[RMDB]
Description:
The record gives the reactivity of an RNA of 207 nucleotides to DMS and 2A3. It was measured as part of the RMDB library OK3TST. 2A3 adducts were read by reverse transcription with SuperScript II with manganese.

RNA sequence: GGGAACGACUCGAGUAGAGUCGAAAAUAAGUUUAUGUAAUAUUGUAAAUCUUGUCAUUUCAACAGUGUCACAGCAUCUGCAUGAGGAGUAGAUUCCAUCUCAACAAAUGACUUUCUUUGCUUAUGCAUAAGAAGCAACUCCAUAUCCAUUAAAGUACUAUAGUGAUCGAUUCGUCGAUCACUAUAGAAAAGAAACAACAACAACAAC
Reactivity to DMS in 0.01 (KOAc 150mM, MgCl2 10mM, bicine 150mM(pH8.5), 24C), signal-to-noise 3, nucleotides 027 to 156: u000a090a130g010u010u000u000a050u000g010u000a090a120u010a060u000u000g000u000a040a030a060u010c010u010u000g000u010c020a110u000u000u010c040a100a080c020a060g010u000g020u000c050a140c060a080g000c050a040u000c060u000g000c040a130u010g000a090g000g010a090g030u000a100g020a150u000u000c020c030a070u000c030u000c020a080a100c140a050a060a040u000g010a080c040u010u000u000c030u000u000u000g000c010u010u010a060u000g000c050a040u010a030a070g020a060a080g030c020a050a060c030u000c030c030a090u010a100u000c050c010a090u010u010a060a040a080g000u000a200
Reactivity to 2A3 in 0.01 (KOAc 150mM, MgCl2 10mM, bicine 150mM(pH8.5), 24C), signal-to-noise 5, nucleotides 027 to 156: u090a020a030g040u030u060u080a070u080g010u040a090a180u060a160u200u110g030u050a030a090a050u050c030u050u080g040u020c030a060u020u090u110c090a130a100c040a060g030u040g040u100c020a030c020a140g010c000a030u050c030u080g020c020a060u090g040a040g060g010a020g020u060a010g030a060u080u020c030c010a100u020c040u010c060a040a150c020a020a070a080u070g030a080c000u070u090u010c020u010u080u040g000c010u130u070a040u210g010c020a020u050a190a020g050a030a010g030c010a030a060c010u000c050c000a040u030a070u100c030c010a010u100u190a070a070a060g070u030a040